Structure probing data (DMS and 2A3) for a 177-nucleotide construct. 2A3 adducts were read by reverse transcription with SuperScript II with manganese. Conditions: 150 mM KOAc, 10 mM MgCl2 and 150 mM bicine (pH 8.5), 24 C. For DMS, 13,233 sequencing reads were counted. For DMS the reverse transcriptase was MarathonRT. For 2A3, 5,686 sequencing reads were counted.
[RMDB]
RNA sequence: GGGAACGACUCGAGUAGAGUCGAAAAGGCUAAUAUGGACUGUCUGCCCACAGACUGGCGUCUCGUUAACAAAUUUGAUAGUGUUGAUGGUGUUAGAACCAUUAAGUAUUUUGAAUGCCCGGGCGGGGACAUGCAUUAGUUUCGACUAAUGCAUGUCAAAAGAAACAACAACAACAAC
Reactivity to DMS in 0.01 (KOAc 150mM, MgCl2 10mM, bicine 150mM(pH8.5), 24C), signal-to-noise 8, nucleotides 027 to 126: g010g010c020u010a080a090u010a100u010g010g020a110c070u000g010u000c050u010g000c030c020c060a130c110a070g010a090c060u000g010g010c080g010u000c020u000c090g010u000u000a060a090c110a050a070a090u010u000u010g000a070u010a060g000u000g010u000u000g000a020u000g010g010u000g010u000u010a170g010a180a090c010c000a020u000u000a020a040g010u000a070u000u000u010u010g010a080a080u000g010c020c030c030g010g000g010c060g010g010g010
Reactivity to 2A3 in 0.01 (KOAc 150mM, MgCl2 10mM, bicine 150mM(pH8.5), 24C), signal-to-noise 4, nucleotides 027 to 126: g050g000c020u040a050a030u120a230u230g040g050a050c050u030g000u050c010u050g030c000c030c010a050c010a010g070a040c020u040g050g030c010g050u000c020u010c040g050u040u060a080a030c050a050a160a120u100u110u110g100a110u090a100g110u100g030u110u050g000a010u000g000g060u020g020u060u090a050g020a100a020c000c000a010u010u000a030a010g030u010a070u040u110u030u090g060a080a010u050g030c000c030c000g040g020g000c040g000g030g010